[RMDB]
RNA sequence: GGGAACGACUCGAGUAGAGUCGAAAAGCACGCAGGAGUGAGGUGAGGAGGACGGCGGCCAGGGCGCGGAGAGCUUGCCGGCGCUCCGCCACCGCCGCUACCUCCUUCCGCGUGCUGGCGAGCUCCGGCCAAAUGUUUUGUUCGCAAAACAUUUGGCAAAAGAAACAACAACAACAAC
Reactivity to DMS in 0.01 (KOAc 150mM, MgCl2 10mM, bicine 150mM(pH8.5), 24C), signal-to-noise 2, nucleotides 027 to 126: g000c000a030c000g010c030a110g000g000a060g040u000g010a060g000g020u030g000a070g000g000a070g020g000a180c130g000g000c020g010g000c140c190a240g040g020g010c260g000c000g000g000a030g030a040g000c040u000u030g010c260c180g000g000c010g000c000u000c020c010g040c000c060a150c020c010g010c000c010g010c010u010a020c000c000u000c000c000u010u010c000c020g020c000g010u000g000c020u000g000g000c210g010a170g000c030u000c000c010g010
Reactivity to 2A3 in 0.01 (KOAc 150mM, MgCl2 10mM, bicine 150mM(pH8.5), 24C), signal-to-noise 4, nucleotides 027 to 126: g000c010a000c010g010c050a080g000g050a060g070u250g040a040g060g040u150g060a060g040g030a020g060g030a100c030g000g010c000g010g000c050c110a190g030g050g000c090g000c000g020g000a010g010a010g010c030u100u170g130c070c070g030g000c020g020c000u010c000c010g000c010c010a010c000c010g000c010c000g000c000u000a010c000c000u000c000c010u020u010c000c000g000c000g000u010g010c010u010g000g030c050g020a030g030c010u010c020c000g020
The record gives the reactivity of an RNA of 177 nucleotides to DMS and 2A3. For DMS, 2,671 sequencing reads were counted. The RNA was probed in 150 mM KOAc, 10 mM MgCl2 and 150 mM bicine (pH 8.5) at 24 C.